[RMDB]
RNA sequence: GGGAACGACUCGAGUAGAGUCGAAAAAAAGUCGAUGGCAGAACGAUGCAGAUGGGUAAUGUCGAGAUUGCAACAACUGGCACAGAAGGCAAACCACACUUUAUAGUUGCAACGAAUAUCAUUGAGAGUCUAUCUUACUUUUCGAAGUAAGAUAGACAAAAGAAACAACAACAACAAC
Reactivity to 2A3 in 0.01 (KOAc 150mM, MgCl2 10mM, bicine 150mM(pH8.5), 24C), signal-to-noise 9, nucleotides 027 to 126: a000a010a000g090u070c030g020a040u050g020g020c020a010g020a120a040c020g020a030u070g000c030a030g050a160u120g030g020g020u080a110a070u060g040u040c020g020a020g020a180u070u080g020c000a040a040c000a040a050c100u040g040g000c040a040c020a110g100a110a030g070g000c030a060a040a060c040c010a060c020a020c050u080u150u100a220u080a110g030u050u050g020c020a010a010c010g060a060a040u110a040u200c080a100u060u120g070a110g010a010
Reactivity to DMS in 0.01 (KOAc 150mM, MgCl2 10mM, bicine 150mM(pH8.5), 24C), signal-to-noise 8, nucleotides 027 to 126: a060a070a070g020u010c040g020a070u010g010g000c050a050g000a100a080c070g000a070u010g010c040a040g000a070u010g000g000g010u010a030a050u020g030u000c050g000a090g010a090u000u010g000c040a030a000c080a080a120c130u020g010g010c060a060c130a070g010a060a090g000g000c050a040a080a110c040c040a060c110a060c130u010u010u020a060u020a080g020u000u000g010c050a030a040c080g000a040a030u020a050u010c070a060u030u020g010a110g020a190